[RMDB]
RNA sequence: GGGAACGACUCGAGUAGAGUCGAAAAGAUAUGGAUUCGCUGGAGGUAACUUUAACGACGACGGGCAGAAAUCGGAAACGAUUUCUGCCCAUCAGUUAAACUUACCGAUGAAAGCGAAUCCUAAGUCCAUAAGCCAUUACUUCGGUAAUGGCUUAUGAAAAGAAACAACAACAACAAC
Reactivity to DMS in 0.01 (KOAc 150mM, MgCl2 10mM, bicine 150mM(pH8.5), 24C), signal-to-noise 2, nucleotides 027 to 126: g010a070u000a300u000g000g000a000u000u000c010g010c000u000g000g020a070g020g010u010a000a010c140u000u000u000a020a000c000g020a130c300g010a020c040g020g000g010c000a000g010a000a000a020u000c000g010g000a110a090a250c000g030a000u000u000u000c000u010g000c000c000c000a010u010c000a090g010u000u000a000a000a000c140u000u010a000c010c000g010a070u000g010a090a120a020g000c000g020a000a000u000c000c010u000a030a150g000u000c050